[RMDB]
Overview:
Conditions: 150 mM KOAc, 10 mM MgCl2 and 150 mM bicine (pH 8.5), 24 C. This 177-nucleotide RNA was probed chemically with 2A3 and DMS. The DMS profile rests on 1,094 reads.
RNA sequence: GGGAACGACUCGAGUAGAGUCGAAAAUAGCAAUUACGCAGUAGGUAUUUAUGCUUACCAGCAUAAAUAGAAGGGAAAUUAUACGAUGUUCAGCUUUAUAAGAGUUGACUCAUAUUUAAGGGACCCACCCAGCUAUGGGAUUCGUCCCAUAGCUGGGAAAAGAAACAACAACAACAAC
Reactivity to 2A3 in 0.01 (KOAc 150mM, MgCl2 10mM, bicine 150mM(pH8.5), 24C), signal-to-noise 1, nucleotides 027 to 126: u200a000g130c020a000a200u150u010a020c030g000c000a000g100u240a000g010g270u030a000u000u000u000a000u000g000c000u000u010a100c020c000a090g000c000a000u000a010a000a000u000a000g070a090a080g000g000g000a010a040a080u070u160a070u000a010c060g030a030u030g150u240u030c000a000g060c020u040u240u050a300u090a210a020g000a030g000u000u130g000a000c000u000c000a050u000a110u000u150u090a080a080g000g000g020a000c000c000c000a050
Reactivity to DMS in 0.01 (KOAc 150mM, MgCl2 10mM, bicine 150mM(pH8.5), 24C), signal-to-noise 1, nucleotides 027 to 126: u080a220g000c090a030a120u000u030a050c150g000c010a210g040u000a090g010g040u000a000u000u000u010a010u000g000c010u000u040a140c250c190a120g040c000a000u000a000a000a000u000a000g000a160a120g000g000g010a150a110a040u000u000a040u000a030c100g010a050u010g000u130u020c010a010g000c000u000u030u000a150u050a130a290g000a000g020u000u000g000a040c010u000c000a040u080a010u000u010u000a070a060g000g000g000a170c000c030c030a300